Structure probing data (2A3 and DMS) for a 177-nucleotide construct. 2A3 adducts were read by reverse transcription with SuperScript II with manganese. For 2A3, 11,635 sequencing reads were counted. Reactivities are given for positions 27 through 126.
RNA sequence: GGGAACGACUCGAGUAGAGUCGAAAAGAUACGUCAGGACGUUCAUCGCCGAGGCAAGGCCACGCUCGGUUCCACACUUCGAUGCCGACCGGUCCGACGACGGAAAACUGUUAUCCCACGCGGCGGCUCCACAUAGUAAGUUCGCUUACUAUGUGGAAAAAGAAACAACAACAACAAC
Reactivity to 2A3 in 0.01 (KOAc 150mM, MgCl2 10mM, bicine 150mM(pH8.5), 24C), signal-to-noise 5, nucleotides 027 to 126: g020a040u120a070c010g000u010c050a060g050g040a030c030g030u100u030c090a070u080c060g010c010c020g020a040g040g050c080a080a090g080g010c050c020a030c050g070c020u040c030g040g000u080u030c050c010a090c020a010c070u100u110c060g060a060u110g020c020c010g070a140c020c020g070g040u020c010c040g020a070c070g010a000c000g020g020a000a090a000a040c030u050g030u120u080a060u040c010c000c010a010c030g070c020g040g000c010g000g000c010
Reactivity to DMS in 0.01 (KOAc 150mM, MgCl2 10mM, bicine 150mM(pH8.5), 24C), signal-to-noise 9, nucleotides 027 to 126: g000a120u000a070c060g010u000c040a140g010g010a070c040g010u000u000c090a100u000c060g010c020c020g000a060g010g010c090a100a120g010g010c030c050a070c120g010c070u000c050g010g010u000u000c050c060a060c170a080c100u000u000c080g010a080u000g000c060c090g000a080c060c040g010g010u000c020c040g010a090c090g000a050c030g000g000a070a060a070a120c100u000g000u010u000a120u000c010c010c010a120c110g010c040g000g010c030g010g000c110